[RMDB]
RNA sequence: GGGAACGACUCGAGUAGAGUCGAAAAAUGGAAACUGCUUCUUUCGAAGCUUUGCGUUAUUAUUCUUCGGAACUGAAGACCAAUGGAGAACAGUGAAAAAUACCUCAAUCAACUAUGCCAGAACAAAUGAGGUGAAGGAAUUCGUUCCUUCACCUCAAAAAGAAACAACAACAACAAC
Reactivity to DMS in 0.01 (KOAc 150mM, MgCl2 10mM, bicine 150mM(pH8.5), 24C), signal-to-noise 1, nucleotides 027 to 126: a010u010g030g000a120a050a040c190u000g000c030u000u000c000u000u000u060c180g010a010a060g000c060u000u000u000g020c060g030u000u000a040u000u000a140u010u000c040u000u030c100g030g000a020a070c120u000g010a020a280g020a070c070c060a070a090u000g020g000a080g020a080a050c070a020g000u000g000a010a090a110a080a040u000a080c030c030u000c000a060a040u010c090a070a050c120u000a080u000g010c000c060a100g000a050a030c170a090a070a120
This 177-nucleotide RNA was probed chemically with DMS. The DMS profile rests on 669 reads. It was measured as part of the RMDB library OK2TRN.